Structure probing data (2A3) for a 207-nucleotide construct.
2A3 adducts were read by reverse transcription with SuperScript II with manganese.
Reactivities are given for positions 27 through 156.
RNA sequence: GGGAACGACUCGAGUAGAGUCGAAAACAUGGUGUCGACGCCGUACACAUGAUAUCGUGCACAACCGGUGCGUCAAUUAUGGCAUAUACGCGUUGACCGAUCGUGUGAUAUGCGCUAAUAUCGGUCGGCGUGCACAUCAUACAUACAGCCGGCGCCGCUGAGAAACUGCUUUCGAGCAGUUUCUCAGAAAAGAAACAACAACAACAAC
Reactivity to 2A3 in 0.01 (KOAc 150mM, MgCl2 10mM, bicine 150mM(pH8.5), 24C), signal-to-noise 2, nucleotides 027 to 156: c040a120u120g050g000u000g000u000c010g020a060c020g000c090c230g010u050a030c050a000c020a070u010g020a020u070a040u170c070g000u040g040c010a000c000a130a140c030c010g090g000u300g200c000g110u100c070a030a030u100u040a090u200g070g050c020a000u010a010u010a040c010g070c020g050u000u170g190a260c120c110g050a050u070c010g010u000g000u020g180a070u030a040u080g030c130g010c070u030a020a000u030a040u110c020g020g020u000c000g020g000c040g000u000g000c000a000c000a000u010c000a000u050a050c040a010u090a010c000a030g000c000c000g000g020c040g010c000c000g000